[RMDB]
RNA sequence: GGGAACGACUCGAGUAGAGUCGAAAACAAAUUAAGCGGGCUAUGCUACGAUCCUCCGCCUGGGGAUUUGUAGAUGAAUCUAAUCAGGCUAGCUCCAUGAAAGCCUGUUGGUAGGCCAACAUGAGAGCGAAUGAUAAUAUACCAACUACGCGUGUAGCACACUUCUCGUGUUCGCACGAGAAGUGUGAAAAGAAACAACAACAACAAC
Reactivity to 2A3 in 0.01 (KOAc 150mM, MgCl2 10mM, bicine 150mM(pH8.5), 24C), signal-to-noise 2, nucleotides 027 to 156: c010a020a100a110u240u270a140a030g030c070g010g040g000c070u070a050u100g000c010u000a020c000g000a000u000c000c000u000c000c020g010c010c010u000g010g000g000g040a000u050u040u300g010u000a000g030a050u040g030a000a110u100c130u270a050a060u060c000a000g000g000c000u000a000g000c000u010c010c000a000u000g000a060a010a000g000c000c000u010g010u000u010g000g010u000a000g000g020c040c000a000a000c000a010u180g030a170g000a000g230c020g000a000a000u030g030a010u040a090a000u010a000u000a000c010c000a000a000c000u070a030c040g130c050g020u070g070u080a020g080